[RMDB]
RNA sequence: GGGAACGACUCGAGUAGAGUCGAAAAGAUAUGGAACCUCCCGACUUUUGACGCUCGGCCAUCGGAAACGAUGGUACGAGCGAUAAGUCGGAGGUUCCUAAGUCAAAGAGCCGUGUUCGCACGGCUCCACGCAUAACCUGUUCGCAGGUUAUGCGUGAAAAGAAACAACAACAACAAC
Reactivity to 2A3 in 0.01 (KOAc 150mM, MgCl2 10mM, bicine 150mM(pH8.5), 24C), signal-to-noise 1, nucleotides 027 to 126: g000a020u040a030u130g010g000a000a000c010c000u080c010c110c010g000a010c000u160u150u170u230g230a130c090g000c000u000c000g020g000c040c000a000u000c020g020g040a040a060a050c020g000a000u000g000g010u000a000c000g000a000g000c000g000a000u010a010a000g000u000c000g000g000a000g000g000u000u000c000c000u000a010a000g000u000c020a120a010a180g000a000g020c000c000g020u000g070u020u140c300g010c110a000c000g000g020c010u000c000
Reactivity to DMS in 0.01 (KOAc 150mM, MgCl2 10mM, bicine 150mM(pH8.5), 24C), signal-to-noise 2, nucleotides 027 to 126: g010a050u000a300u000g000g000a000a010c000c000u000c070c080c080g030a030c000u000u000u000u000g020a210c140g000c000u010c010g000g000c010c000a020u000c000g020g000a090a070a110c000g020a020u000g000g020u000a020c000g010a000g010c000g000a000u000a010a010g020u000c000g000g020a020g000g000u000u000c000c000u000a020a050g010u010c030a110a150a170g000a000g000c020c000g040u000g000u000u000c280g020c010a020c010g010g000c010u000c000
Chemical mapping of a 177-nucleotide RNA with 2A3 and DMS. Reactivities are given for positions 27 through 126. For 2A3, 3,111 sequencing reads were counted. Source: RMDB library TTRDES, as collected in RNAgym. For 2A3 the reverse transcriptase was SuperScript II with manganese. The reactions ran in a buffer of 150 mM KOAc, 10 mM MgCl2 and 150 mM bicine (pH 8.5), at 24 C. In probing experiments dimethyl sulfate is read out at A N1 and C N3, which are open when not base-paired.